Chemical mapping of a 177-nucleotide RNA with 2A3 and DMS. Source: RMDB library 15KREP, as collected in RNAgym. DMS adducts were read by reverse transcription with MarathonRT.
[RMDB]
RNA sequence: GGGAACGACUCGAGUAGAGUCGAAAAGAGUGUGGAGUCUACACCAGUUGAACCUCCAACUGUAGAUGUGGUAGCACUUCAACAGGAAAUGACAAUUGUCAAAUGUAAGGGUUUAAAUAAACCUUUCGCUUACUAUGUGGUUCGCCACAUAGUAAGCAAAAGAAACAACAACAACAAC
Reactivity to 2A3 in 0.01 (KOAc 150mM, MgCl2 10mM, bicine 150mM(pH8.5), 24C), signal-to-noise 2, nucleotides 027 to 126: g050a020g040u120g010u020g030g050a050g060u000c000u010a000c010a020c000c010a010g000u020u010g030a160a070c010c030u080c060c010a020a000c010u010g010u050a090g050a240u160g070u070g080g000u020a010g000c030a010c000u030u030c030a060a020c000a040g170g000a040a040a080u050g000a020c030a080a300u170u220g000u030c020a020a030a100u120g060u130a050a000g060g010g020u010u020u080a180a300a170u180a090a040a020c000c000u020u020u040c040
Reactivity to DMS in 0.01 (KOAc 150mM, MgCl2 10mM, bicine 150mM(pH8.5), 24C), signal-to-noise 2, nucleotides 027 to 126: g010a020g020u000g020u000g020g010a060g000u010c000u000a060c040a020c020c020a010g030u000u000g010a130a210c120c200u000c110c000a010a080c020u000g000u000a070g010a220u000g020u010g010g030u000a150g000c070a020c000u000u000c010a030a030c070a070g050g000a090a050a020u020g020a050c040a210a130u000u000g090u010c010a030a040a120u020g000u010a020a050g000g000g000u000u000u000a040a090a040u010a010a010a030c000c010u000u010u000c110

The RNA was probed in 150 mM KOAc, 10 mM MgCl2 and 150 mM bicine (pH 8.5) at 24 C.